[RMDB]
RNA sequence: GGGAACGACUCGAGUAGAGUCGAAAAAAAGAACUGUAGGGACUACAGGGUUAGCCUAGGGUAUAUAAGAUAGAUAUAGCGUUGAUUCGAUCAUUUGUCUUUUUCUAGGAAAUUUCUAUUAAAUAGAUCUUAUGACUGCAUUCGUGCAGUCAUAAGAAAAAGAAACAACAACAACAAC
Reactivity to 2A3 in 0.01 (KOAc 150mM, MgCl2 10mM, bicine 150mM(pH8.5), 24C), signal-to-noise 2, nucleotides 027 to 126: a000a000a000g040a010a000c000u000g020u030a010g050g150g190a090c040u020a000c020a010g070g060g000u080u040a020g040c000c000u000a000g030g050g060u100a060u030a020u050a250a040g010a020u040a000g010a010u040a010u070a140g060c040g030u040u090g110a050u180u020c050g030a070u060c000a010u030u000u020g000u010c000u000u030u050u050u050c000u000a000g000g000a030a030a030u030u070u010c060u030a150u220u210a090a070a050u100a050g040a020
Reactivity to DMS in 0.01 (KOAc 150mM, MgCl2 10mM, bicine 150mM(pH8.5), 24C), signal-to-noise 2, nucleotides 027 to 126: a010a050a070g000a190a110c000u020g020u000a000g050g010g000a290c100u030a010c020a000g000g000g000u040u010a120g010c010c000u000a010g000g000g020u030a090u030a070u060a070a020g000a040u030a020g000a020u000a030u050a040g020c040g000u020u050g040a180u000u040c030g000a060u000c130a040u000u000u000g020u010c000u000u000u000u000u000c010u010a010g010g000a090a070a040u010u000u000c000u000a110u020u050a080a080a150u030a050g010a130